[RMDB]
RNA sequence: GGGAACGACUCGAGUAGAGUCGAAAAAUGGUCAUCUCAGCCGGGACAGAGACCCGGCGAAGAGUGCAAGAGCAAAAGAUGACUUGACAGUGUUCUUCCCAACGAGGAACGCUGACGCGAAAGCGUGGUCUAGCGAACCAAUUAGCCUGCUUGAUGCCACCUUAACUCCGUUCGCGGAGUUAAGGUGAAAAGAAACAACAACAACAAC
Reactivity to 2A3 in 0.01 (KOAc 150mM, MgCl2 10mM, bicine 150mM(pH8.5), 24C), signal-to-noise 1, nucleotides 027 to 156: a020u110g000g000u000c000a000u010c030u000c020a010g000c000c000g020g000g020a030c090a150g100a010g040a200c000c040c030g000g010c000g000a030a010g050a020g030u090g000c020a110a040g010a010g140c010a000a040a070a000g020a010u000g000a000c000u010u030g190a040c030a010g010u020g020u070u020c000u030u020c050c140c000a040a070c150g050a040g030g020a000a000c000g000c000u020g020a060c000g020c000g110a140a030a000g000c010g030u050g000g020u000c000u000a000g000c000g040a020a040c000c000a000a050u090u020a060g080c010c050u060g010c020u040u060g020a050u230g100c000

Conditions: 150 mM KOAc, 10 mM MgCl2 and 150 mM bicine (pH 8.5), 24 C.
Chemical mapping of a 207-nucleotide RNA with 2A3.